[RMDB]
RNA sequence: GGGAACGACUCGAGUAGAGUCGAAAAGAAAGAAAGAAGGCUCCGGUGUCCCAGGCAUGUCACGGGACCGCCCAGGUGUGGGCGGUGGCAUCCCGUGUCUGUUUUCCGGGAGGGACCCGGCUUUCAACUGGUACUACAAGUUCGCUUGUAGUACCAGAAAAGAAACAACAACAACAAC
Reactivity to 2A3 in 0.01 (KOAc 150mM, MgCl2 10mM, bicine 150mM(pH8.5), 24C), signal-to-noise 7, nucleotides 027 to 126: g070a010a060a010g090a020a110a010g020a020a020g060g010c080u100c130c040g030g000u180g010u050c000c000c000a000g000g020c010a010u260g010u000c000a000c010g000g000g000a010c010c000g010c010c010c010a100g130g120u300g100u120g120g000g000c000g010g000u040g010g040c030a070u060c000c000c000g000u000g000u000c000u000g040u020u140u120u050c020c020g090g040g050a140g040g020g000a000c000c000c010g000g000c000u000u010u010c000a010a020
Reactivity to DMS in 0.01 (KOAc 150mM, MgCl2 10mM, bicine 150mM(pH8.5), 24C), signal-to-noise 3, nucleotides 027 to 126: g010a130a070a090g000a070a080a090g000a090a030g010g030c070u050c030c000g030g010u040g030u010c010c020c010a130g000g000c050a010u010g030u000c000a010c010g020g000g000a070c010c000g010c000c000c010a080g000g080u070g030u000g000g010g030c000g000g030u020g000g020c200a180u030c000c010c000g010u000g030u010c010u010g010u000u010u000u000c050c030g000g010g030a160g020g000g000a030c010c010c000g000g000c000u010u000u000c000a090a200
An RNA of 177 nucleotides, treated with 2A3 and DMS and read out base by base.
Reactivities are given for positions 27 through 126.
2A3 adducts were read by reverse transcription with SuperScript II with manganese.
The RNA was probed in 150 mM KOAc, 10 mM MgCl2 and 150 mM bicine (pH 8.5) at 24 C.
In probing experiments dimethyl sulfate is read out at A N1 and C N3, which are open when not base-paired.